[RMDB]
RNA sequence: GGGAACGACUCGAGUAGAGUCGAAAAGAACCAUAAUAAAACUGUGGAUAACUUACUAAAGUCUUAGGAGGAACUUGGUCAUAGUUGAUAUUGAAUAGAGAGAACAAGUGUCUGGGACUUUCUGCCAUCGUAUCAUACUGUUCGCAGUAUGAUACGAAAAAGAAACAACAACAACAAC
Reactivity to 2A3 in 0.01 (KOAc 150mM, MgCl2 10mM, bicine 150mM(pH8.5), 24C), signal-to-noise 2, nucleotides 027 to 126: g020a020a020c000c000a000u030a140a040u080a030a190a020a030c070u010g000u030g010g020a080u080a140a100c000u020u100a030c020u060a060a000a020g000u000c000u030u060a060g080g000a030g060g070a040a030c000u000u030g000g030u040c010a020u050a090g100u040u170g110a080u140a100u150u090g020a060a030u130a060g080a010g030a000g010a090a000c010a020a020g000u000g030u010c010u020g000g000g000a000c000u010u030u020c030u050g020c000c020a050
Reactivity to DMS in 0.01 (KOAc 150mM, MgCl2 10mM, bicine 150mM(pH8.5), 24C), signal-to-noise 3, nucleotides 027 to 126: g010a150a170c010c000a000u010a030a100u000a100a100a110a240c170u010g020u000g000g000a140u000a060a060c030u000u010a130c100u010a030a030a040g000u000c020u000u000a080g020g030a110g010g020a070a030c020u010u000g030g000u000c000a110u000a140g010u000u000g030a090u000a080u000u000g000a080a110u010a090g000a120g010a140g010a020a050c020a030a040g000u000g010u000c040u000g000g010g000a060c030u000u000u000c070u000g010c040c050a090